[RMDB]
RNA sequence: GGGAACGACUCGAGUAGAGUCGAAAAGAAGACGUGACGAAAAGUCACGUCAAUACAGAGACUACGCAACUCUGAAAAGCACAACAAAAGUGUAAAAGCGUAGCAGGAUCGAGAGAUCCUGAAAAGAAUCCCAUCCACCAUUCGUGGUGGAUGGGAUAAAAGAAACAACAACAACAAC
Reactivity to 2A3 in 0.01 (KOAc 150mM, MgCl2 10mM, bicine 150mM(pH8.5), 24C), signal-to-noise 2, nucleotides 027 to 126: g210a030a070g000a000c000g000u000g000a000c000g070a210a220a080a060g000u000c000a010c000g000u000c000a000a010u070a000c000a000g010a000g020a030c000u000a000c000g000c020a110a040c000u040c000u000g010a000a060a010a000g010c030a030c020a000a260c090a110a200a090a030g020u040g000u040a010a030a000a000g000c010g000u000a000g000c000a000g000g000a000u000c010g000a010g010a000g000a130u000c000c010u010g000a000a000a000a000g090a000
Reactivity to DMS in 0.01 (KOAc 150mM, MgCl2 10mM, bicine 150mM(pH8.5), 24C), signal-to-noise 2, nucleotides 027 to 126: g000a200a150g000a000c000g000u030g000a010c000g000a140a170a070a170g000u000c000a000c000g000u000c040a030a060u030a120c100a010g030a010g000a040c000u000a000c000g000c030a160a070c000u000c000u030g000a100a080a060a150g000c010a000c000a040a150c300a020a120a100a090g040u000g000u000a000a010a010a300g000c000g000u000a000g000c040a000g000g000a000u000c000g000a190g000a120g030a000u010c010c000u000g000a030a050a060a060g010a090
Structure probing data (2A3 and DMS) for a 177-nucleotide construct.
The reactions ran in a buffer of 150 mM KOAc, 10 mM MgCl2 and 150 mM bicine (pH 8.5), at 24 C.
For 2A3, 1,706 sequencing reads were counted.
DMS adducts were read by reverse transcription with MarathonRT.